Chemical mapping of a 177-nucleotide RNA with DMS and 2A3. Values cover nucleotides 27 to 126. Conditions: 150 mM KOAc, 10 mM MgCl2 and 150 mM bicine (pH 8.5), 24 C.
RNA sequence: GGGAACGACUCGAGUAGAGUCGAAAACUAUCUCGGUGAAGACCAAAACCUCGCCGAAGACGGUGCCAUUAUCAUCGGUUUCGACACCGGAAUCGCGUUCAUCAUGGGACUUGUCGUCUUCCCGAUCAAUCCACCACUGAUUCGUCAGUGGUGGAUUAAAAGAAACAACAACAACAAC
Reactivity to DMS in 0.01 (KOAc 150mM, MgCl2 10mM, bicine 150mM(pH8.5), 24C), signal-to-noise 4, nucleotides 027 to 126: c070u010a080u020c130u000c000g020g020u020g040a030a030g020a030c070c090a050a050a110a230c070c040u000c040g000c030c040g010a020a040g010a290c020g000g000u000g010c030c000a040u000u000a030u000c140a100u000c140g020g010u000u000u000c020g000a050c160a050c100c000g010g000a170a120u010c000g000c140g020u010u000c130a070u000c180a070u010g020g010g010a080c170u000u010g010u010c110g010u010c050u000u000c010c000c000g000a040u010c140
Reactivity to 2A3 in 0.01 (KOAc 150mM, MgCl2 10mM, bicine 150mM(pH8.5), 24C), signal-to-noise 4, nucleotides 027 to 126: c030u050a060u160c080u010c060g000g000u180g060a050a020g020a040c040c000a010a010a000a090c000c000u030c010g020c050c100g020a020a010g010a000c000g000g000u020g070c020c010a090u070u140a050u100c120a060u100c080g070g030u040u110u150c090g050a060c050a040c080c000g000g020a010a010u000c010g000c050g080u100u080c060a200u030c030a060u180g010g030g050a060c080u050u120g040u070c030g020u000c010u000u010c000c000c000g010a040u080c030